[RMDB]
RNA sequence: GGGAACGACUCGAGUAGAGUCGAAAAUCCUGAAUGAUUUUUUUCUGCAGAUAGGGGCUUAGGAUAAUGAUUUGUGCUUUAUUGGGGCAGAUUAGUCACAGUGUCACUACUGUCUCUCAAUGUGCCCUUCAAGUGUAAGCUUCGGCUUACACUUGAAAAAAGAAACAACAACAACAAC
Reactivity to DMS in 0.01 (KOAc 150mM, MgCl2 10mM, bicine 150mM(pH8.5), 24C), signal-to-noise 4, nucleotides 027 to 126: u010c010c020u000g010a100a090u030g000a010u000u020u010u020u010u020u000c050u010g000c080a060g000a080u010a060g000g000g000g020c040u010u010a060g000g000a090u030a050a120u020g000a070u020u000u010g000u000g000c010u000u000u000a070u040u000g000g010g000g020c010a000g000a020u000u000a070g000u000c220a020c020a030g010u010g000u020c300a100c260u040a010c010u000g010u020c060u010c010u000c150a010a020u010g000u000g000c000c010c000
Reactivity to 2A3 in 0.01 (KOAc 150mM, MgCl2 10mM, bicine 150mM(pH8.5), 24C), signal-to-noise 2, nucleotides 027 to 126: u000c010c000u010g090a080a060u050g080a080u130u020u000u080u050u060u060c030u060g010c000a050g000a080u100a070g050g000g050g000c050u100u130a020g030g030a070u030a170a060u140g080a050u060u040u040g040u040g010c040u080u060u030a080u140u220g000g000g000g000c000a020g050a190u030u040a000g000u050c000a010c060a150g060u050g090u270c060a000c110u150a010c000u010g010u000c000u000c000u000c040a010a000u020g000u020g150c000c000c000